[RMDB]
Conditions: 150 mM KOAc, 10 mM MgCl2 and 150 mM bicine (pH 8.5), 24 C. An RNA of 177 nucleotides, treated with 2A3 and DMS and read out base by base. It was measured as part of the RMDB library OK2TST.
RNA sequence: GGGAACGACUCGAGUAGAGUCGAAAAGCGGCGCGGCAUCACCGGCCUCCGGCGCGGAGCGGGCCGCGUCCUGGGAGGACACCACCAGACCGGGCAGCACCGACGGGUCCACUUCGGCGGAGACCACGAUUUCUUAGUGGUUCGCCACUAAGAAAUCAAAAGAAACAACAACAACAAC
Reactivity to 2A3 in 0.01 (KOAc 150mM, MgCl2 10mM, bicine 150mM(pH8.5), 24C), signal-to-noise 3, nucleotides 027 to 126: g030c030g020g000c040g000c020g060g000c030a050u080c030a030c020c030g060g010c000c000u050c020c070g150g000c210g020c060g130g020a030g030c080g010g000g030c000c000g120c000g030u020c000c010u020g010g020g010a070g010g020a040c040a060c050c030a000c020c020a040g060a100c060c040g050g010g000c060a050g040c030a050c020c020g070a060c050g020g020g010u020c020c010a030c010u070u040c020g040g030c030g010g010a030g010a020c000c020a060c090
Reactivity to DMS in 0.01 (KOAc 150mM, MgCl2 10mM, bicine 150mM(pH8.5), 24C), signal-to-noise 3, nucleotides 027 to 126: g010c080g010g010c020g030c030g000g000c040a100u010c060a110c060c040g010g020c030c000u010c090c070g010g010c050g010c040g010g000a060g020c110g020g000g010c000c010g010c030g020u000c020c050u000g000g000g010a150g000g010a090c070a090c060c050a070c030c020a120g000a120c080c040g000g000g020c040a100g020c080a060c030c030g000a060c070g000g000g000u000c010c040a080c080u000u000c050g000g020c010g010g000a070g000a160c020c040a100c160